[RMDB]
RNA sequence: GGGAACGACUCGAGUAGAGUCGAAAAACCGGCGGUAAAUCAACUCAGUUGAAAGCCGCGAGCGCUUUGGGUGCGAACUCAAAGGACAGCAGAUCCGGUGUGAUUCCGGGGCCGACGGUUAGAGUCCAAAAGAGGUUAUCGUUCGCGAUAACCUCAACACAAUUUAAGUGUUCGCACUUAAAUUGUGAAAAGAAACAACAACAACAAC
Reactivity to DMS in 0.01 (KOAc 150mM, MgCl2 10mM, bicine 150mM(pH8.5), 24C), signal-to-noise 2, nucleotides 027 to 156: a000c010c010g050g000c000g020g000u000a030a160a150u110c040a050a110c040u010c040a180g000u000u000g010a070a160a230g000c040c030g000c040g000a050g080c020g020c020u000u000u000g000g000g020u000g000c300g000a230a020c000u010c020a020a030a050g010g020a060c020a170g010c000a060g000a160u000c040c000g030g030u000g010u000g020a300u000u010c010c010g000g010g000g000c000c020g000a030c020g000g020u000u000a160g010a250g020u010c020c010a010a050a090a200g030a040g010g000u000u000a000u000c010g030u000u000c300g010c030g010a030u000a010a010c000c000u010c010a010a070
Reactivity to 2A3 in 0.01 (KOAc 150mM, MgCl2 10mM, bicine 150mM(pH8.5), 24C), signal-to-noise 2, nucleotides 027 to 156: a000c030c010g020g000c020g010g030u100a190a130a190u050c030a010a030c050u080c300a140g000u050u050g060a100a070a010g040c040c030g030c040g020a030g000c020g000c010u020u010u010g010g000g000u060g030c050g060a110a020c000u000c010a000a010a010g010g050a090c040a050g020c000a020g020a090u020c010c000g000g040u010g010u000g050a040u090u000c020c010g000g000g010g020c030c020g020a010c010g000g020u010u020a040g020a030g160u050c020c010a000a080a020a080g010a000g000g000u000u000a000u000c010g010u060u060c230g010c000g110a000u000a000a010c000c000u000c000a000a000
This 207-nucleotide RNA was probed chemically with DMS and 2A3. For DMS, 3,353 sequencing reads were counted. It was measured as part of the RMDB library M2RFPK. The 2A3 profile rests on 2,020 reads.